Chemical mapping of a 177-nucleotide RNA with DMS. Conditions: 150 mM KOAc, 10 mM MgCl2 and 150 mM bicine (pH 8.5), 24 C. Reactivities are rounded to 0.1 and cut off at 0 and 3. DMS adducts were read by reverse transcription with MarathonRT.

RNA sequence: GGGAACGACUCGAGUAGAGUCGAAAACUUGGCACGUUCGCGUGCCAAGAAAGUACGCCAAAGUGACGCAAUCUUCCGCGUCAAAAAGGCGAAACGAGGUAAAAAGCGGCCCGUUCGCGGGCCGCAACGAUUAGUCUAUCUUCGGAUAGACUAAUCGAAAAGAAACAACAACAACAAC
Reactivity to DMS in 0.01 (KOAc 150mM, MgCl2 10mM, bicine 150mM(pH8.5), 24C), signal-to-noise 2, nucleotides 027 to 126: c000u000u000g010g000c010a000c000g020u010u030c210g030c000g090u000g010c000c000a010a000g000a090a090a070g010u000a090c020g000c010c000a040a240a090g010u000g000a010c010g010c000a210a120u030c210u020u010c230c110g010c000g000u000c000a000a030a040a110a300g000g000c000g000a020a060a030c100g000a150g020g010u010a060a110a090a160a120g030c020g000g010c000c000c030g000u000u000c170g020c070g000g020g030c000c030g000c020a000a040